Structure probing data (2A3 and DMS) for a 170-nucleotide construct. 2A3 adducts were read by reverse transcription with SuperScript II with manganese. Source: RMDB library 15KLIB, as collected in RNAgym. The reactions ran in a buffer of 150 mM KOAc, 10 mM MgCl2 and 150 mM bicine (pH 8.5), at 24 C. For 2A3, 36,718 sequencing reads were counted. For DMS the reverse transcriptase was MarathonRT.
[RMDB]
RNA sequence: GGGAACGACUCGAGUAGAGUCGAAAAAAAAGAGCGAGCCUCUCGAUACGAAAGGGCCGCGAGCCUAUCGAGUUUGGAGUCAUCCGGGCCGAAGGGUUGAGACGCACCCACAGACGGGAGCCUCCAGUUAGAUCAUACUUCGGUAUGAUCAAAAGAAACAACAACAACAAC
Reactivity to 2A3 in 0.01 (KOAc 150mM, MgCl2 10mM, bicine 150mM(pH8.5), 24C), signal-to-noise 9, nucleotides 027 to 129: a000a000a000a000g120a000g020c070g000a010g010c030c000u010c000u000c020g080a100u090a300c070g080a140a060a070g010g000g010c010c040g030c020g030a040g000c000c000u070a150u080c050g010a080g090u010u060u060g060g010a030g040u100c040a080u010c040c000g010g010g010c020c020g060a070a100g030g010g000u020u040g050a040g010a050c040g010c030a030c000c000c000a040c020a020g070a020c030g000g000g000a010g010c000c000u000c000c000a010g020u070u130a020
Reactivity to DMS in 0.01 (KOAc 150mM, MgCl2 10mM, bicine 150mM(pH8.5), 24C), signal-to-noise 9, nucleotides 027 to 129: a030a020a050a020g030a060g030c100g020a060g010c220c010u020c010u040c040g000a100u010a130c080g030a070a130a070g060g000g000c250c010g000c110g010a050g000c020c020u020a100u000c010g030a100g020u010u010u010g000g000a010g000u050c120a060u000c040c040g000g000g000c010c020g010a080a300g000g000g000u010u000g000a120g020a130c050g020c080a120c000c000c010a040c120a120g020a120c080g000g000g000a000g020c110c010u030c030c030a010g030u060u030a040